[RMDB]
RNA sequence: GGGAACGACUCGAGUAGAGUCGAAAAAGGGAAAACCUACACCUCGGGCUUAGCGGGAGGGUCCACGGGUGGGAUCGGGUCUUACAUUUCCAUACGGGUGGGUUUUCCCCACACUUGAGGGAAACUACCUCGUGAAUGUGUUCGCACAUUCACGAGGAAAAGAAACAACAACAACAAC
Reactivity to 2A3 in 0.01 (KOAc 150mM, MgCl2 10mM, bicine 150mM(pH8.5), 24C), signal-to-noise 1, nucleotides 027 to 126: a010g010g000g020a000a000a000a000c030c000u060a000c040a200c040c030u060c070g060g000g000c010u080u130a090g050c070g050g090g050a220g070g040g010u110c060c040a040c080g020g000g100u160g000g010g020a040u200c010g030g000g030u000c040u020u090a080c040a180u060u060u000c020c010a020u020a100c060g010g000g000u040g000g000g000u000u000u000u000c000c000c000c000a000c000a010c010u100u150g060a110g050g020g040a070a010a040c010u180a040
Source information:
The data come from the RNA Mapping Database (RMDB), library OK2TST. Chemical mapping of a 177-nucleotide RNA with 2A3. The RNA was probed in 150 mM KOAc, 10 mM MgCl2 and 150 mM bicine (pH 8.5) at 24 C.